Annotation:
Source: RMDB library OK2TRN, as collected in RNAgym. The record gives the reactivity of an RNA of 177 nucleotides to DMS and 2A3. 2A3 is a SHAPE reagent: it acylates the 2'-hydroxyl of flexible nucleotides of all four kinds. Conditions: 150 mM KOAc, 10 mM MgCl2 and 150 mM bicine (pH 8.5), 24 C.
RNA sequence: GGGAACGACUCGAGUAGAGUCGAAAAGAGCUCUCAAUUCUCCAAAAUGGUGCUCAACUUCAAGGAACUCCAAUAAAGUUCUACGUGGAUGCUUAUGGAGAUGGAUGGGCAACUGUUUAUGGACCAAGACCUAAAUGAGGUUCGCCUCAUUUAGGUCAAAAGAAACAACAACAACAAC
Reactivity to DMS in 0.01 (KOAc 150mM, MgCl2 10mM, bicine 150mM(pH8.5), 24C), signal-to-noise 2, nucleotides 027 to 126: g020a290g010c040u000c020u030c030a180a160u040u000c070u000c000c010a010a080a070a080u000g020g030u000g000c040u000c060a070a060c080u020u000c130a060a240g020g000a030a060c000u000c000c000a050a110u010a110a100a010g010u000u000c010u010a020c210g020u000g000g010a020u000g020c040u010u010a220u010g030g000a030g000a080u000g000g010a190u010g000g010g010c000a040a080c060u020g000u000u000u000a040u010g000g000a170c150c060a120a090
Reactivity to 2A3 in 0.01 (KOAc 150mM, MgCl2 10mM, bicine 150mM(pH8.5), 24C), signal-to-noise 2, nucleotides 027 to 126: g010a020g000c000u000c010u000c040a020a210u130u050c030u050c010c000a000a080a040a050u060g080g000u040g040c020u000c050a060a050c070u080u080c070a070a030g100g010a050a020c000u000c030c030a080a050u220a240a060a000g000u020u030c020u060a070c070g080u130g070g000a030u110g010c000u090u080a020u110g000g000a030g000a010u000g040g030a050u020g000g000g020c070a150a020c030u010g040u050u100u120a160u100g010g030a030c000c010a050a020